[RMDB]
RNA sequence: GGGAACGACUCGAGUAGAGUCGAAAAUCAAGAGAGGGUGCUUCUCUCAGCCCUCUCACUGGGAAAUCUUUCUCUGGAAUCCCGAUAGGUUGUAGAGACUAGGGAGUGUUAUGGAGGGCUAAUUUACUGUUUGGUAUGAGUUCGCUCAUACCAAACAAAAAGAAACAACAACAACAAC
Reactivity to DMS in 0.01 (KOAc 150mM, MgCl2 10mM, bicine 150mM(pH8.5), 24C), signal-to-noise 2, nucleotides 027 to 126: u000c080a080a100g020a060g010a010g040g010g010u000g020c140u010u010c020u000c000u010c020a300g000c010c000c000u000c010u000c030a090c050u010g010g000g010a020a080a120u000c160u000u010u000c010u000c000u000g020g000a120a090u000c010c010c050g000a200u000a070g000g000u000u000g010u010a100g000a230g000a020c060u010a140g000g000g000a050g030u000g010u010u010a120u030g010g000a060g000g000g030c070u020a030a040u000u000u000a100c160
Background:
Source: RMDB library OK2TRN, as collected in RNAgym. The record gives the reactivity of an RNA of 177 nucleotides to DMS. The DMS profile rests on 1,176 reads.